This 207-nucleotide RNA was probed chemically with 2A3.
The 2A3 profile rests on 746 reads.
Values cover nucleotides 27 to 156.
The RNA was probed in 150 mM KOAc, 10 mM MgCl2 and 150 mM bicine (pH 8.5) at 24 C.
RNA sequence: GGGAACGACUCGAGUAGAGUCGAAAACUGCAUUGGAGAUGCCAGAUUUCAUUUUCCUUGCAGGGGAAAAGGGUCAGGAAAUUUGACAUCUGCAUGUGUUUCCUUCCCCUAGGGAUUUCCUAGCCGAGCAGUGGCCAUCCCCAUGCCUCUGACCUCACCUAGCACCUGGAUUCGUCCAGGUGCUAGGAAAAGAAACAACAACAACAAC
Reactivity to 2A3 in 0.01 (KOAc 150mM, MgCl2 10mM, bicine 150mM(pH8.5), 24C), signal-to-noise 2, nucleotides 027 to 156: c020u090g000c020a030u070u150g060g030a000g000a000u000g050c000c030a010g020a030u010u010u000c010a060u050u160u170u270c010c000u070u080g080c200a230g000g030g000g000a000a050a000a070g080g000g080u180c110a070g090g040a020a000a030u000u060u050g000a000c000a000u020c020u040g090c070a010u030g040u000g050u060u010u030c030c000u030u020c000c010c000c010u020a030g030g040g160a300u190u170u120c000c000u020a000g000c110c050g080a030g000c040a010g000u020g010g020c020c020a190u140c020c000c000c000a000u060g000c010c000u000c010u040g020a140c040c000u060c000a040